Source information:
An RNA of 207 nucleotides, treated with DMS and 2A3 and read out base by base. For DMS, 3,074 sequencing reads were counted.
[RMDB]
RNA sequence: GGGAACGACUCGAGUAGAGUCGAAAAGCACUAGAGGGCGUAACGGCUGGGUGUAACCCAACUCUAGGUGUGCUGAUUAGCGGGCUUGACUCCGUAACAAAUAGGCACUGGCGGUAAAAAGCAUCCCUGACCAUAUACAUCUUCGGAUGUAUAUGAACAAAGUUAGGGAGUUCGCUCCCUAACUUUGAAAAGAAACAACAACAACAAC
Reactivity to DMS in 0.01 (KOAc 150mM, MgCl2 10mM, bicine 150mM(pH8.5), 24C), signal-to-noise 2, nucleotides 027 to 156: g000c010a060c010u000a060g010a080g020g020g010c000g010u000a160a110c300g050g010c010u000g010g010g020u000g020u010a070a300c000c000c000a050a050c000u000c030u000a050g030g000u010g020u020g030c010u000g020a100u020u000a220g000c010g000g050g040c050u000u000g020a160c120u000c000c000g010u020a060a100c090a050a050a070u010a100g020g000c030a020c030u010g010g010c030g030g040u000a090a040a090a100a060g030c030a220u000c000c010c020u000g020a160c120c010a030u000a010u000a000c000a000u010c000u000u010c300g050g000a020u000g000u000a000u000a010u020g000a040a190
Reactivity to 2A3 in 0.01 (KOAc 150mM, MgCl2 10mM, bicine 150mM(pH8.5), 24C), signal-to-noise 2, nucleotides 027 to 156: g020c020a020c040u000a000g000a000g020g010g030c030g010u070a130a050c050g130g010c010u010g010g000g020u020g080u090a080a080c000c010c000a040a020c000u000c000u000a060g000g070u030g020u040g010c000u010g020a100u040u080a030g050c040g000g060g000c070u090u160g020a120c060u020c070c000g000u010a030a020c030a020a060a060u180a060g080g020c050a030c080u080g080g000c040g060g040u090a110a030a000a000a000g020c010a050u050c000c000c000u040g040a070c050c020a000u000a000u000a000c000a000u000c000u000u020c090g110g000a000u000g000u010a000u000a000u000g000a020a030
Values cover nucleotides 27 to 156. Conditions: 150 mM KOAc, 10 mM MgCl2 and 150 mM bicine (pH 8.5), 24 C. For DMS the reverse transcriptase was MarathonRT.